[RMDB]
RNA sequence: GGGAACGACUCGAGUAGAGUCGAAAACAGCAGUGGCGCAGGGAAAUGAAUGUCCGUUUGACGGCGGAGACUCGUGUCACUACCUUCGGAUGCAGAUCAGAUAUGCCUAAUGAACUGAUUUGACACGCAGUAAAGGAUGUUUCGACAUCCUUUACUGAAAAGAAACAACAACAACAAC
Reactivity to 2A3 in 0.01 (KOAc 150mM, MgCl2 10mM, bicine 150mM(pH8.5), 24C), signal-to-noise 9, nucleotides 027 to 126: c050a010g130c040a010g010u020g030g000c060g010c080a160g070g020g090a040a140a080u200g100a110a070u140g110u050c010c020g010u040u070u230g190a080c080g050g000c000g010g010a010g020a020c010u010c030g000u010g010u010c000a000c010u040a060c010c010u070u110c040g070g010a060u080g000c000a000g010a030u010c000a000g060a070u110a060u250g110c050c060u250a250a130u190g060a060a060c010u010g010a030u020u010u020g060a080c010a000c040g010
Reactivity to DMS in 0.01 (KOAc 150mM, MgCl2 10mM, bicine 150mM(pH8.5), 24C), signal-to-noise 9, nucleotides 027 to 126: c170a130g010c110a030g030u000g010g010c020g010c020a100g010g010g010a080a100a120u030g010a100a090u030g000u000c000c010g020u010u010u010g020a140c280g000g000c010g000g000a050g000a080c020u010c050g020u000g010u010c000a020c020u010a080c060c060u010u020c060g010g010a150u020g010c020a020g000a020u000c010a010g010a120u020a070u010g010c120c090u020a080a070u020g010a120a120c020u000g000a020u000u000u010g000a120c060a130c120g000